[RMDB]
RNA sequence: GGGAACGACUCGAGUAGAGUCGAAAAGUACUAUCACCAUCUUACCAAAUAGCAGUGACAUAUAUCUGGUAAGGUACUAGGAUGGCAGUGUAUAUGUCACUUAGUAUCUAUCAGAUGGUGAUAGUAGGCUUGUCGAAGAUUUCGAUCUUUGACGAGCAAAAGAAACAACAACAACAAC
Reactivity to DMS in 0.01 (KOAc 150mM, MgCl2 10mM, bicine 150mM(pH8.5), 24C), signal-to-noise 9, nucleotides 027 to 126: g010u010a010c000u000a000u000c000a000c010c000a010u000c000u000u010a040c030c020a010a060a020u010a010g010c180a160g000u010g010a140c190a140u030a070u000a010u000c050u000g000g000u000a030a030g010g010u000a010c020u000a010g000g000a090u010g010g000c010a010g000u030g030u040a090u040a050u000g010u000c000a010c000u000u000a010g010u000a010u000c010u000a100u020c180a030g000a000u000g010g010u000g000a000u000a000g010u000a010g010
Reactivity to 2A3 in 0.01 (KOAc 150mM, MgCl2 10mM, bicine 150mM(pH8.5), 24C), signal-to-noise 9, nucleotides 027 to 126: g040u010a000c000u000a000u000c000a000c000c000a000u000c000u010u040a020c010c020a030a040a060u060a030g120c140a100g110u110g240a130c100a040u240a010u020a010u050c030u010g040g010u040a050a030g020g000u010a020c010u020a010g080g170a300u020g020g000c000a010g030u050g180u220a080u080a060u230g000u010c000a000c000u000u000a000g000u000a010u020c020u010a110u150c040a010g000a000u000g000g000u000g000a000u000a000g000u000a000g000